Description
Source: RMDB library OK2TST, as collected in RNAgym. The record gives the reactivity of an RNA of 177 nucleotides to DMS and 2A3. 2A3 adducts were read by reverse transcription with SuperScript II with manganese. The DMS profile rests on 5,397 reads. The RNA was probed in 150 mM KOAc, 10 mM MgCl2 and 150 mM bicine (pH 8.5) at 24 C.

[RMDB]
RNA sequence: GGGAACGACUCGAGUAGAGUCGAAAAUACCCUCGCUCUUCUUCACGGCCUCAACUGCCCCCUCCUUCAUUACGGGCUCCUUUACGAAGAGGCCGAGGGCCUUGGUUAGCCCACAGUUCUAAAAGAAGAUAUAUUACGACUUCGGUCGUAAUAUAUCAAAAGAAACAACAACAACAAC
Reactivity to DMS in 0.01 (KOAc 150mM, MgCl2 10mM, bicine 150mM(pH8.5), 24C), signal-to-noise 6, nucleotides 027 to 126: u010a110c010c010c010u000c110g000c040u000c010u000u010c070u010u010c140a230c120g010g000c080c000u010c030a100a220c110u000g000c030c020c000c040c050u000c050c040u000u010c130a070u010u010a090c200g010g000g000c020u000c060c060u000u010u000a110c150g010a080a200g010a030g000g000c300c000g010a040g010g000g010c020c040u010u000g000g010u000u010a120g000c000c000c010a080c180a080g000u010u000c060u000a090a080a110a170g000a140a140
Reactivity to 2A3 in 0.01 (KOAc 150mM, MgCl2 10mM, bicine 150mM(pH8.5), 24C), signal-to-noise 2, nucleotides 027 to 126: u070a000c000c000c000u000c010g030c010u040c000u080u050c010u100u160c070a030c120g030g000c000c010u130c070a280a280c210u260g010c000c010c060c000c020u040c020c010u030u090c030a070u030u180a040c050g000g000g020c020u080c000c010u120u080u030a060c050g030a000a080g000a040g020g000c010c000g010a010g000g010g000c000c000u000u010g020g010u010u070a030g020c000c050c010a040c000a060g090u140u060c050u100a140a060a020a020g110a070a010